RNA sequence: GGGAACGACUCGAGUAGAGUCGAAAAGUUAGGCGAGGCUCCUAUAGAAACACAGGUUGCUGAUCUGACGACGUCGAGAGACGCCCAAGAUUAGGACAGGAUAUAUCGAACCAAGGUAUAUCCCCAUAAAACUCGGAACACUUCGGUGUUCCGAGAACAAUACUAGUAUCUUCGGAUACUAGUAUUGAAAAGAAACAACAACAACAAC
Reactivity to DMS in 0.01 (KOAc 150mM, MgCl2 10mM, bicine 150mM(pH8.5), 24C), signal-to-noise 4, nucleotides 027 to 156: g020u000u000a010g020g020c060g010a120g030g000c070u000c020c000u010a150u000a170g000a150a070a110c050a040c110a070g020g010u000u000g020c000u000g000a070u000c010u010g020a160c020g010a010c000g000u000c010g010a300g010a300g000a030c020g000c010c020c090a170a090g000a050u000u010a080g010g010a160c080a030g000g010a030u000a000u000a000u000c000g010a080a300c120c110a130a140g020g020u010a010u000a020u000c000c000c040c020a050u000a050a080a080a170c010u010c000g020g010a030a010c000a000c000u000u010c290g040g010u000g000u000u000c000c000g010a000g000a020a060
Reactivity to 2A3 in 0.01 (KOAc 150mM, MgCl2 10mM, bicine 150mM(pH8.5), 24C), signal-to-noise 4, nucleotides 027 to 156: g020u030u020a030g010g030c090g080a090g060g000c030u030c010c010u060a080u070a210g200a050a150a010c090a020c030a070g060g040u210u150g030c010u010g020a080u000c000u020g000a000c020g000a010c000g000u000c010g010a040g010a010g000a130c010g030c000c000c010a030a020g080a090u170u230a030g020g050a030c080a060g000g010a000u010a000u000a000u000c020g030a100a120c120c080a140a040g000g000u000a000u000a000u020c000c000c010c000a050u210a090a180a040a040c000u000c000g000g000a000a000c000a000c010u030u090c250g060g000u000g000u000u000c000c000g000a000g000a000a010
The record gives the reactivity of an RNA of 207 nucleotides to DMS and 2A3. For DMS the reverse transcriptase was MarathonRT. The RNA was probed in 150 mM KOAc, 10 mM MgCl2 and 150 mM bicine (pH 8.5) at 24 C.